[RMDB]
RNA sequence: GGGAACGACUCGAGUAGAGUCGAAAACUCAAUGUAGGGAAUAACAUUGAAUUGAUACAAAUACCUUUUUCGGUGUAGGGAAAAACACCGAAUUGAUACAAAUACCUUUCUCAAUGUAGGGAAAAACAAAACAGGCAUCGCUUCGGCGAUGCCUGAAGAUACCACCCAUGUUCGCAUGGGUGGUAUCAAAAGAAACAACAACAACAAC
Reactivity to 2A3 in 0.01 (KOAc 150mM, MgCl2 10mM, bicine 150mM(pH8.5), 24C), signal-to-noise 2, nucleotides 027 to 156: c020u000c000a000a020u020g020u070a100g030g070g120a100a120u110a090a030c010a020u000u000g010a070a060u100u160g060a040u150a180c080a050a140a070u180a100c020c010u020u000u000u000u000c000g000g050u000g000u010a010g010g020g080a080a090a140a080a000c010a020c000c010g000a000a000u010u010g010a000u010a030c020a010a090a010u080a070c010c000u030u030u010c020u010c030a120a090u220g020u120a080g000g000g010a010a010a000a040a030c030a010a090a010a020c010a000g000g000c000a000u010c000g080c000u130u150c250g030g030c000g000a000u000g010c000c010u000g000a000a000

Structure probing data (2A3) for a 207-nucleotide construct. The RNA was probed in 150 mM KOAc, 10 mM MgCl2 and 150 mM bicine (pH 8.5) at 24 C. It was measured as part of the RMDB library M2RFPK.